RNA sequence: GGGAACGACUCGAGUAGAGUCGAAAACACGAACGUUGGCUAAUCCUGGUCGGACAUCAGGAGGUUAGUGCAGUGGCAUAAGCCAUCUUGGCGCUAAUAGAUACUAAUCGUAGCAUAGCUGAAUAAAACCUGGGAUACGAUUCGUCGUAUCCCAGGUAAAAGAAACAACAACAACAAC
Reactivity to DMS in 0.01 (KOAc 150mM, MgCl2 10mM, bicine 150mM(pH8.5), 24C), signal-to-noise 2, nucleotides 027 to 126: c050a110c250g010a070a030c300g000u010u020g000g000c050u000a020a090u000c010c030u010g000g010u000c140g050g010a240c010a000u000c100a010g000g010a030g030g040u000u000a000g020u000g030c000a100g000u000g030g010c000a170u020a030a100g000c000c000a000u020c170u000u050g020g050c000g000c000u000a030a000u000a080g010a020u000a110c010u010a110a040u120c190g000u000a000g030c040a060u000a040g000c030u000g010a000a010u020a090a110a080
Reactivity to 2A3 in 0.01 (KOAc 150mM, MgCl2 10mM, bicine 150mM(pH8.5), 24C), signal-to-noise 3, nucleotides 027 to 126: c110a010c020g080a110a000c080g100u140u040g050g000c020u060a080a110u000c000c000u010g020g020u010c120g130g110a040c000a020u000c010a000g010g000a010g050g060u030u000a000g000u000g000c010a000g000u000g000g000c020a080u110a240a040g000c010c000a020u070c130u140u190g080g000c020g000c020u000a030a040u040a060g080a030u020a110c010u060a040a050u130c030g080u030a020g040c020a050u050a020g000c000u080g050a120a000u130a060a110a000